[RMDB]
RNA sequence: GGGAACGACUCGAGUAGAGUCGAAAAUCAAAGAGAAGACUCGUGUCUUCUUGACACCAUAUAUAUGCUAUGUGCACUCAAAGAAUUGAGAAGCACACAUCAGAAAACCAUUCCUUUGGAAAAAGAGGUAAAGAGUCUUCUUCGGAAGACUCUUUACAAAAGAAACAACAACAACAAC
Reactivity to DMS in 0.01 (KOAc 150mM, MgCl2 10mM, bicine 150mM(pH8.5), 24C), signal-to-noise 2, nucleotides 027 to 126: u020c130a050a120a160g030a000g000a000a000g010a020c000u050c300g020u030g000u010c010u000u000c000u000u000g000a160c080a170c100c050a100u040a100u010a140u030a140u010g000c240u020a080u000g010u030g000c000a260c000u000c030a000a020a220g000a140a220u020u000g000a010g140a220a110g000c030a010c000a060c170a010u000c080a020g000a030a070a030a080c040c060a130u000u050c010c040u010u020u000g020g020a020a060a030a140a050g000a070g000
Reactivity to 2A3 in 0.01 (KOAc 150mM, MgCl2 10mM, bicine 150mM(pH8.5), 24C), signal-to-noise 5, nucleotides 027 to 126: u090c020a040a080a020g030a000g000a010a000g040a010c060u100c300g140u230g040u240c010u010u000c000u000u020g020a040c010a050c030c020a010u080a010u020a020u010a020u210g030c080u070a030u100g000u010g000c000a030c020u010c010a030a050a130g170a240a300u090u040g000a020g070a140a040g000c000a000c000a000c000a030u100c030a010g080a090a070a040a010c060c020a050u080u140c020c000u130u110u070g060g080a120a030a030a010a000g140a070g040
Conditions: 150 mM KOAc, 10 mM MgCl2 and 150 mM bicine (pH 8.5), 24 C. The record gives the reactivity of an RNA of 177 nucleotides to DMS and 2A3. In probing experiments dimethyl sulfate is read out at A N1 and C N3, which are open when not base-paired.